[RMDB]
RNA sequence: GGGAACGACUCGAGUAGAGUCGAAAAACGGUAGUCGGCGAGUUCGGCUAUCUGGUUGCCGAAUUCGGUGAGCUCCCACUUGGUCGUGCGCCAGGUGAAAUAGCUGUAGGACUGCGUGAAGCCGAGCAAACCUCUGUCAAUUCGUUGACAGAGGUUUAAAAGAAACAACAACAACAAC
Reactivity to 2A3 in 0.01 (KOAc 150mM, MgCl2 10mM, bicine 150mM(pH8.5), 24C), signal-to-noise 1, nucleotides 027 to 126: a010c070g000g050u010a010g000u010c010g050g140c010g000a030g000u000u000c000g000g000c000u040a070u060c130u100g270g000u180u020g010c020c000g000a010a030u050u000c030g080g020u070g050a010g000c000u040c000c020c000a030c010u000u030g000g000u060c090g200u110g030c100g000c010c040a000g020g030u060g050a050a000a030u100a040g010c020u040g030u140a060g080g090a050c030u060g020c000g040u060g060a040a030g060c000c010g040a020g050c050
Reactivity to DMS in 0.01 (KOAc 150mM, MgCl2 10mM, bicine 150mM(pH8.5), 24C), signal-to-noise 3, nucleotides 027 to 126: a060c050g020g000u000a020g000u000c000g000g010c000g000a020g030u000u000c010g010g020c000u000a030u020c150u000g000g000u010u000g020c010c000g010a040a030u000u000c010g040g000u010g000a050g030c010u000c300c110c000a030c010u000u000g000g020u000c060g020u010g020c200g010c000c010a030g000g000u000g000a020a090a060u000a050g010c010u010g030u020a110g030g000a040c020u000g020c040g000u000g010a090a140g010c020c020g010a130g010c170